[RMDB]
RNA sequence: GGGAACGACUCGAGUAGAGUCGAAAACGAUGUAAACGAGCAAACUCUUUAAACCCAGAAUGGAAGAUUUGCUCGGAGCCACCCAGCGUAUCACGGCGAGCCUGACUUUCUUGAUACAGGCGAGACAUAUCGGAAAGACAUUCGUGUCUUUCCGAUAAAAAGAAACAACAACAACAAC
Reactivity to DMS in 0.01 (KOAc 150mM, MgCl2 10mM, bicine 150mM(pH8.5), 24C), signal-to-noise 4, nucleotides 027 to 126: c140g010a090u000g000u010a040a080a180c000g010a010g020c000a010a020a010c110u000c010u010u000u000a070a080a160c080c050c090a160g000a090a100u010g020g010a020a020g020a100u000u000u000g010c000u010c000g000g000a120g020c060c050a080c020c000c020a140g030c070g000u000a050u000c060a040c150g010g000c030g010a150g010c030c050u010g010a120c090u000u010u010c080u010u000g010a120u010a050c030a020g000g010c010g000a100g010a060c130a080
Reactivity to 2A3 in 0.01 (KOAc 150mM, MgCl2 10mM, bicine 150mM(pH8.5), 24C), signal-to-noise 2, nucleotides 027 to 126: c050g020a020u120g040u270a100a080a060c010g000a000g000c000a010a000a050c060u020c000u040u080u160a190a180a130c040c030c040a070g220a130a090u180g040g040a020a010g010a040u000u000u030g000c000u000c000g000g000a010g000c020c000a030c020c000c000a010g000c040g030u100a030u100c030a020c080g080g000c020g020a020g010c000c040u070g060a150c050u120u270u100c030u130u210g020a040u070a170c000a000g040g000c030g000a010g000a020c060a020